[RMDB]
RNA sequence: GGGAACGACUCGAGUAGAGUCGAAAACUGACUAGGUUCGCCUAGUCAGAAAUAAAAGGAGCAAAAGCAUGAGGUCCUAAAAAUCAUGCAAGACGAAAGUCAAAACUCGUUACUUCGGUAACGAGAAGAAACUAAGUUGGUUCGCCAACUUAGUUUCAAAAGAAACAACAACAACAAC
Reactivity to 2A3 in 0.01 (KOAc 150mM, MgCl2 10mM, bicine 150mM(pH8.5), 24C), signal-to-noise 3, nucleotides 027 to 126: c000u000g000a010c000u000a000g010g030u050u040c190g060c050c000u000a010g000u000c010a000g000a010a010a000u150a010a120a010a040g130g010a060g070c060a050a080a120a040g000c000a010u020g000a010g080g080u050c010c020u100a120a080a020a020a030u030c010a020u010g010c010a020a030g010a010c030g050a100a040a000g000u010c000a010a020a030a080c000u000c010g010u000u010a010c000u020u040c210g090g000u000a000a000c010g010a010g000a000a030
Reactivity to DMS in 0.01 (KOAc 150mM, MgCl2 10mM, bicine 150mM(pH8.5), 24C), signal-to-noise 3, nucleotides 027 to 126: c010u000g000a010c000u000a010g030g010u000u010c270g030c000c000u000a010g000u010c000a010g000a040a050a080u000a060a030a100a160g020g020a100g020c120a060a070a070a160g010c000a010u000g020a020g000g000u000c020c040u010a020a100a060a100a050u000c010a020u000g000c010a130a070g010a030c020g000a060a090a090g010u000c010a120a070a120a170c000u000c000g000u000u000a000c000u000u000c190g020g000u000a010a010c000g000a000g000a050a050